[RMDB]
RNA sequence: GGGAACGACUCGAGUAGAGUCGAAAAAUGCACUGGUUCGCCAGUGCAUGAUUACCGAGAAAGUACCUCGGUAUAAAAGUGCAAGCCUUGGAAACAAGGGAAUUCCGAACCGAUUCGUCGGUUCGAAGGCAUGAAGUACGUUCGCGUACUUCAUGCCAAAAGAAACAACAACAACAAC
Reactivity to DMS in 0.01 (KOAc 150mM, MgCl2 10mM, bicine 150mM(pH8.5), 24C), signal-to-noise 2, nucleotides 027 to 126: a000u000g020c000a000c000u020g010g030u000u010c250g010c000c000a040g020u000g000c040a000u000g000a130u020u020a030c000c000g010a000g000a150a100a130g000u000a120c150c020u000c000g010g010u000a020u010a030a030a060a080g060u000g010c170a170a110g010c000c010u010u010g000g010a120a070a150c020a000a000g000g020g010a120a080u030u020c100c020g000a000a010c000c000g020a050u000u000c240g000u000c000g000g000u000u000c010g010a040a070
Reactivity to 2A3 in 0.01 (KOAc 150mM, MgCl2 10mM, bicine 150mM(pH8.5), 24C), signal-to-noise 1, nucleotides 027 to 126: a000u010g000c000a000c000u010g020g000u020u060c140g040c090c000a010g000u000g020c000a000u000g000a010u030u010a010c010c000g000a010g010a010a190a000g170u090a060c010c000u000c000g000g030u010a000u060a010a020a010a010g170u100g140c060a070a110g150c010c000u020u000g040g060a070a040a050c010a010a000g040g000g010a030a130u130u040c070c000g000a000a000c000c000g020a020u010u040c170g050u010c000g130g000u020u000c000g000a000a010
The data come from the RNA Mapping Database (RMDB), library M2PK50. The record gives the reactivity of an RNA of 177 nucleotides to DMS and 2A3. Reactivities are given for positions 27 through 126. The reactions ran in a buffer of 150 mM KOAc, 10 mM MgCl2 and 150 mM bicine (pH 8.5), at 24 C. 2A3 adducts were read by reverse transcription with SuperScript II with manganese. For 2A3, 1,511 sequencing reads were counted. For DMS the reverse transcriptase was MarathonRT.